Notes
Structure probing data (2A3) for a 207-nucleotide construct. For 2A3, 949 sequencing reads were counted. The reactions ran in a buffer of 150 mM KOAc, 10 mM MgCl2 and 150 mM bicine (pH 8.5), at 24 C. 2A3 adducts were read by reverse transcription with SuperScript II with manganese. Source: RMDB library ARCHII, as collected in RNAgym.
RNA sequence: GGGAACGACUCGAGUAGAGUCGAAAAGGAAACUCGUUCGCGAGUUUCCCUCUAGUCCUGAUAGGGUAGUGGACUAUCCUCCUGGCUUGCGGAGCCAGGGACCGGAGUUCAAAUCUCCGUCAGGACGCCAAUAUGAAGAGCGAUUCGUCGCUCUUAACAACCUUCAGCAUUUCGAUGCUGAAGGUUGAAAAGAAACAACAACAACAAC
Reactivity to 2A3 in 0.01 (KOAc 150mM, MgCl2 10mM, bicine 150mM(pH8.5), 24C), signal-to-noise 2, nucleotides 027 to 156: g000g010a000a000a010c000u010c010g030u100u050c240g000c050g080a010g000u000u000u010c000c000c000u010c060u040a020g000u010c000c000u000g020a020u060a230g070g010g050u110a080g160u090g020g020a020c010u010a090u060c000c000u000c000c000u020g050g020c030u050u070g160c190g200g060a010g000c000c000a000g000g010g000a010c080c100g010g020a000g000u000u040c010a040a140a280u100c040u030c000c020g040u000c000a010g010g000a010c000g000c010c010a100a080u230a070u260g130a000a000g020a000g010c050g000a010u040u030c190g020u030c000g220c010u060c010u030u010a000a010